[RMDB]
RNA sequence: GGGAACGACUCGAGUAGAGUCGAAAAGAUAUGGAACAAACAACGCACGAUAAGAUGGCCUCGGAAACGAGGUGCAUCUUUUGACGUGCGGUUUGUUCCUAAGUCAAAGACGCUGUUCGCAGCGUCACUACAUAACCCUGUUCGCAGGGUUAUGUAGAAAAGAAACAACAACAACAAC
Reactivity to 2A3 in 0.01 (KOAc 150mM, MgCl2 10mM, bicine 150mM(pH8.5), 24C), signal-to-noise 8, nucleotides 027 to 126: g020a010u060a020u150g000g010a010a000c010a000a010a010c060a200a210c080g010c010a020c030g220a150u060a300a010g000a000u010g010g000c000c000u000c010g020g010a060a060a040c010g000a000g020g010u020g010c000a000u000c000u020u010u020u090g170a100c120g000u010g000c000g000g000u000u000u000g000u000u000c000c000u000a020a000g020u010c030a060a050a180g000a000c000g000c010u020g060u110u120c300g000c190a000g000c000g000u000c000a000
Reactivity to DMS in 0.01 (KOAc 150mM, MgCl2 10mM, bicine 150mM(pH8.5), 24C), signal-to-noise 9, nucleotides 027 to 126: g010a040u000a300u020g000g000a010a000c000a010a010a010c010a160a220c060g010c000a010c000g020a190u000a020a010g010a010u000g000g000c000c000u010c000g010g000a080a050a170c010g010a010g000g020u000g010c000a000u000c000u000u000u000u010g010a160c090g020u000g000c010g010g000u000u000u000g000u000u000c000c000u000a010a060g010u010c030a100a120a120g010a020c000g020c000u000g010u000u010c240g020c010a010g010c000g010u000c010a060
This 177-nucleotide RNA was probed chemically with 2A3 and DMS.
The DMS profile rests on 27,633 reads.
Conditions: 150 mM KOAc, 10 mM MgCl2 and 150 mM bicine (pH 8.5), 24 C.